[RMDB]
RNA sequence: GGGAACGACUCGAGUAGAGUCGAAAAGAUAUGGAACAGGGAGCGAUUAUGGCUAAGACAGUCGGAAACGAUCGAGCCAGAAUCGCGAAGAACUGUUCCUAAGUCAAAAGCGGUCUUCGGACCGCAAGACAUGCUUUUCGUUCGCGAAAAGCAUGUCAAAAGAAACAACAACAACAAC
Reactivity to 2A3 in 0.01 (KOAc 150mM, MgCl2 10mM, bicine 150mM(pH8.5), 24C), signal-to-noise 1, nucleotides 027 to 126: g020a000u020a020u150g020g010a010a010c000a020g050g000g000a020g000c000g000a000u000u050a010u110g010g010c000u030a080a000g140a130c110a040g030u000c020g020g010a110a100a040c000g000a010u110c030g010a000g000c000c010a000g000a010a010u020c000g000c000g030a000a050g000a010a010c000u000g000u000u000c010c000u000a100a000g040u030c040a060a040a040a080g000c000g030g010u040c000u050u070c230g130g000a000c000c020g000c000a010a010
Reactivity to DMS in 0.01 (KOAc 150mM, MgCl2 10mM, bicine 150mM(pH8.5), 24C), signal-to-noise 2, nucleotides 027 to 126: g030a040u020a300u000g000g010a020a010c010a020g020g010g000a110g030c000g020a010u000u020a030u000g000g000c000u000a120a060g050a070c300a080g050u000c040g000g000a140a030a110c040g010a010u000c040g020a080g000c030c000a000g000a060a030u000c020g000c000g000a060a060g010a170a150c000u000g010u000u010c010c010u000a020a120g000u000c040a090a040a090a110g010c000g000g000u000c000u000u010c250g020g010a030c000c000g000c000a010a030

Source information:
This 177-nucleotide RNA was probed chemically with 2A3 and DMS. The reactions ran in a buffer of 150 mM KOAc, 10 mM MgCl2 and 150 mM bicine (pH 8.5), at 24 C. DMS adducts were read by reverse transcription with MarathonRT. It was measured as part of the RMDB library TTRDEL.